[RMDB]
RNA sequence: GGGAACGACUCGAGUAGAGUCGAAAAGGCCGAGAGUUCGCUCUCGGCCAAAGAAUAAAAGAGCGAACCCAACCCAAACAACGCUCAUAGAAGGGAGGGAAAAAAGCAUAAUCUUCGGAUUAUGCAAGGAUAUAUUUAGGUUCGCCUAAAUAUAUCCAAAAGAAACAACAACAACAAC
Reactivity to DMS in 0.01 (KOAc 150mM, MgCl2 10mM, bicine 150mM(pH8.5), 24C), signal-to-noise 2, nucleotides 027 to 126: g000g030c010c000g030a030g020a030g020u000u000c160g010c000u000c000u000c000g000g020c000c000a010a020a040g000a140a060u000a080a050a120a090g000a030g000c000g000a080a130c050c030c040a130a170c060c030c040a080a100a110c080a060a130c040g020c010u000c020a100u000a060g000a110a060g000g010g000a110g000g010g010a000a030a040a080a140a120g000c010a020u000a000a000u010c000u000u010c160g010g010a010u000u010a000u000g010c000a060a040
Reactivity to 2A3 in 0.01 (KOAc 150mM, MgCl2 10mM, bicine 150mM(pH8.5), 24C), signal-to-noise 1, nucleotides 027 to 126: g000g030c010c020g040a000g000a000g020u110u120c190g040c140u000c010u000c020g020g000c010c000a000a000a000g000a000a020u100a040a120a050a020g020a000g000c000g020a040a030c020c010c030a050a100c000c000c020a000a100a150c030a030a050c030g010c020u060c090a050u080a040g130a060a050g010g000g000a050g000g000g000a100a040a030a030a040a010g020c000a000u010a010a000u000c010u020u080c250g100g000a000u000u010a000u000g030c000a000a040

Structure probing data (DMS and 2A3) for a 177-nucleotide construct.